[RMDB]
This 177-nucleotide RNA was probed chemically with DMS and 2A3. DMS adducts were read by reverse transcription with MarathonRT. Conditions: 150 mM KOAc, 10 mM MgCl2 and 150 mM bicine (pH 8.5), 24 C. 2A3 is a SHAPE reagent: it acylates the 2'-hydroxyl of flexible nucleotides of all four kinds. For 2A3 the reverse transcriptase was SuperScript II with manganese.
RNA sequence: GGGAACGACUCGAGUAGAGUCGAAAAAAUAAUAGGACAAACAUAAUACCGAUACCUGAUGUAAAGAACGGUACAAAUCCCAUUAACAAAUUGACGAUAGCAGUGAGUGCUAAUCCAAGAACUAAGACGUCAACUACCUAUUCGUAGGUAGUUGACGAAAAGAAACAACAACAACAAC
Reactivity to DMS in 0.01 (KOAc 150mM, MgCl2 10mM, bicine 150mM(pH8.5), 24C), signal-to-noise 2, nucleotides 027 to 126: a040a010u070a090a080u010a040g010g010a060c180a070a070a080c140a060u090a010a200u010a070c050c000g010a120u020a110c000c030u000g000a070u020g050u100a140a110a040g000a040a110c040g020g000u000a020c140a050a050a110u000c000c000c000a080u020u100a050a180c160a050a270a000u030u030g000a260c300g010a050u000a010g010c020a080g000u000g010a160g040u000g000c000u050a000a040u030c000c020a140a050g040a040a030c030u010a120a070g000a130
Reactivity to 2A3 in 0.01 (KOAc 150mM, MgCl2 10mM, bicine 150mM(pH8.5), 24C), signal-to-noise 2, nucleotides 027 to 126: a000a030u280a000a030u080a050g050g000a040c230a020a200a030c080a030u300a300a030u000a230c000c010g020a040u030a050c060c030u080g020a090u080g210u300a000a210a000g050a130a020c010g000g090u020a010c070a010a050a050u000c000c050c000a080u090u070a000a080c100a190a000a090u030u190g000a060c040g000a010u110a040g040c040a000g060u250g130a040g080u020g040c000u030a150a000u090c110c000a000a020g020a000a000c030u120a030a050g130a050